[RMDB]
RNA sequence: GGGAACGACUCGAGUAGAGUCGAAAACUUUAGUCCUAUUUAUUGGUCUUGCAUAUUAUCAAGGUACACCUACGUCUACUGUAGAACAAGUCGCAGAUAAGUAUCCAGCUCAACAAGCAGGAUUACAAGUAUGUGGUUUGUUCGCAAACCACAUACUAAAAGAAACAACAACAACAAC
Reactivity to DMS in 0.01 (KOAc 150mM, MgCl2 10mM, bicine 150mM(pH8.5), 24C), signal-to-noise 2, nucleotides 027 to 126: c120u010u000u010a060g010u000c020c030u000a090u000u000u000a070u020u000g000g000u000c040u000u020g020c090a050u010a030u020u000a080u000c060a130a060g050g000u000a050c060a070c130c010u010a050c080g010u020c170u000a100c170u000g020u020a070g000a050a060c090a060a080g030u000c000g010c080a070g000a020u020a040a070g010u010a060u000c080c090a050g030c040u000c030a040a090c140a040a010g000c010a040g020g010a030u010u010a020c210a030
Reactivity to 2A3 in 0.01 (KOAc 150mM, MgCl2 10mM, bicine 150mM(pH8.5), 24C), signal-to-noise 1, nucleotides 027 to 126: c040u280u100u030a010g020u070c010c000u000a010u000u080u060a140u040u090g040g000u000c030u040u050g020c070a000u030a040u280u000a040u110c030a030a080g050g000u050a020c030a010c010c010u040a050c070g070u020c040u100a130c030u090g000u050a040g020a080a030c000a080a050g000u000c000g040c070a010g030a060u010a100a000g030u010a010u020c020c000a030g010c000u030c050a030a120c030a040a060g050c030a010g000g040a030u060u120a020c020a030